The record gives the reactivity of an RNA of 177 nucleotides to 2A3 and DMS. It was measured as part of the RMDB library M2PK50. For 2A3 the reverse transcriptase was SuperScript II with manganese. The reactions ran in a buffer of 150 mM KOAc, 10 mM MgCl2 and 150 mM bicine (pH 8.5), at 24 C.

RNA sequence: GGGAACGACUCGAGUAGAGUCGAAAACUACGAUGCUUCGGCAUCGUAGAAAGAAAACUCAAGACGAAUGCGCUGAAAAUCGUCUUGAGACAGCGCAAAGAAAAACUUGGUUCUUCGGAACCAAGAAGUACAUUAUAAACUUCGGUUUAUAAUGUACAAAAGAAACAACAACAACAAC
Reactivity to 2A3 in 0.01 (KOAc 150mM, MgCl2 10mM, bicine 150mM(pH8.5), 24C), signal-to-noise 7, nucleotides 027 to 126: c010u000a000c000g010a000u000g000c010u060u100c220g110g000c010a000u000c000g000u000a000g000a000a010a000g000a010a060a010a020c010u010c010a000a000g010a000c010g020a110a080u180g020c070g030c100u110g040a090a040a010a090u010c000g000u000c000u000u010g000a000g010a000c010a010g040c050g020c040a070a100a070g130a060a150a050a020a030c010u010u000g000g010u010u000c010u030u040c230g080g000a000a000c000c010a000a000g000a010a000
Reactivity to DMS in 0.01 (KOAc 150mM, MgCl2 10mM, bicine 150mM(pH8.5), 24C), signal-to-noise 5, nucleotides 027 to 126: c000u000a010c000g010a010u000g010c000u000u010c210g040g010c000a000u000c010g020u010a010g000a040a080a130g000a070a070a120a190c020u000c000a010a010g000a010c000g020a040a110u010g020c060g020c060u000g000a070a040a070a120u000c000g010u000c010u000u000g010a020g000a050c140a050g020c050g020c050a090a120a090g010a070a060a070a080a140c000u000u000g000g000u000u000c000u000u020c160g020g010a010a000c000c000a000a000g000a020a070